Overview: Chemical mapping of a 177-nucleotide RNA with DMS and 2A3. Values are in units of 0.01, from 0 to 300, in steps of 10. The reactions ran in a buffer of 150 mM KOAc, 10 mM MgCl2 and 150 mM bicine (pH 8.5), at 24 C. The data come from the RNA Mapping Database (RMDB), library RFM100.

[RMDB]
RNA sequence: GGGAACGACUCGAGUAGAGUCGAAAAAGAGAGGUUAGGAGACAGCUUCUAAAGAUUUAUCUUGGCGAGGGGAAACCCAGGGUAGCUCCCAUCUGAGUACGUCGCAUCCUAACAUGCCAAUCCGGAGGUAUCCAUCGAAGUUCGCUUCGAUGGAUACAAAAGAAACAACAACAACAAC
Reactivity to DMS in 0.01 (KOAc 150mM, MgCl2 10mM, bicine 150mM(pH8.5), 24C), signal-to-noise 3, nucleotides 027 to 126: a090g000a090g000a060g010g000u010u000a080g000g000a100g010a080c130a150g000c050u000u000c040u000a080a070a020g000a050u010u000u030a020u040c020u000u010g010g030c070g020a180g000g000g030g000a040a110a140c120c010c000a030g010g000g000u000a050g000c060u000c010c010c020a060u030c070u010g000a130g020u010a050c130g010u010c040g030c050a120u000c020c020u000a020a030c070a080u030g020c040c040a030a110u000c020c040g000g000a150g010
Reactivity to 2A3 in 0.01 (KOAc 150mM, MgCl2 10mM, bicine 150mM(pH8.5), 24C), signal-to-noise 3, nucleotides 027 to 126: a000g170a000g010a020g040g030u040u030a010g020g020a000g020a040c030a070g020c000u040u000c020u220a070a070a000g050a030u090u110u060a080u060c040u030u060g060g000c070g040a120g020g050g010g070a020a050a040c000c000c000a000g010g000g000u000a010g030c010u080c030c000c000a060u030c030u040g030a030g020u040a000c070g000u000c020g000c040a050u020c000c000u010a010a010c020a060u120g010c040c030a030a080u090c070c010g080g000a030g010